[RMDB]
RNA sequence: GGGAACGACUCGAGUAGAGUCGAAAAGCGGAAGUAAAAUUCCGUGGAGGACCGAACCACAUUGGUGUUGAAAAACCAUGGGAUGAGCUGUGGAUAGCGGAGAAAUUCCAAUCGAACUCGGAGAUAGAGACUAACGAUGAUUCGUCAUCGUUAGUCUAAAAGAAACAACAACAACAAC
Reactivity to DMS in 0.01 (KOAc 150mM, MgCl2 10mM, bicine 150mM(pH8.5), 24C), signal-to-noise 3, nucleotides 027 to 126: g030c050g010g000a000a020g010u000a080a130a150a200u000u000c000c000g030u010g000g020a110g010g010a180c030c010g000a110a140c060c020a070c160a080u010u000g020g020u000g010u010u000g000a070a100a080a120a050c020c010a030u000g000g000g000a090u010g010a080g000c050u010g010u000g010g010a110u000a060g000c070g000g000a090g000a050a090a120u000u010c020c020a030a090u020c040g000a100a110c100u000c070g000g010a080g010a110u000a110g000
Reactivity to 2A3 in 0.01 (KOAc 150mM, MgCl2 10mM, bicine 150mM(pH8.5), 24C), signal-to-noise 1, nucleotides 027 to 126: g000c000g010g000a030a000g000u090a030a000a080a080u020u010c030c000g000u020g010g010a070g030g090a010c010c060g000a070a040c010c030a030c030a130u010u150g050g000u040g020u080u130g100a080a070a000a030a030c000c020a030u020g000g000g080a090u040g040a020g000c020u000g020u040g070g030a080u060a070g050c070g000g000a080g060a040a110a030u190u000c010c000a010a080u060c030g020a030a050c060u010c000g000g030a070g040a060u150a110g160